Record summary: An RNA of 177 nucleotides, treated with DMS and read out base by base.

RNA sequence: GGGAACGACUCGAGUAGAGUCGAAAAAUCAACACAAAGAUAGGUUUGUUGAUGGUCUUUGGUAUUGUUUUGGAAUUGUUAAUGUGGAUUGUUAUCCUGACAAUUCUCUUGUUUGUAGAUAUGACACCACCGAAUGUUUGUUCGCAAACAUUCGGUGAAAAGAAACAACAACAACAAC
Reactivity to DMS in 0.01 (KOAc 150mM, MgCl2 10mM, bicine 150mM(pH8.5), 24C), signal-to-noise 1, nucleotides 027 to 126: a040u000c020a020a020c060a040c090a070a080a060g010a100u000a110g020g010u000u000u010g010u010u000g000a050u010g000g010u000c040u010u000u010g010g020u010a120u000u030g000u000u000u000u000g010g000a030a010u000u000g020u020u000a080a110u000g010u010g020g010a020u000u020g010u010u000a150u000c000c000u000g000a030c000a010a020u000u000c000u010c140u000u000g010u010u010u010g000u000a070g010a130u020a020u000g000a050c110a080c240
The RNA was probed in 150 mM KOAc, 10 mM MgCl2 and 150 mM bicine (pH 8.5) at 24 C.
It was measured as part of the RMDB library OK2TST.
Reactivities are given for positions 27 through 126.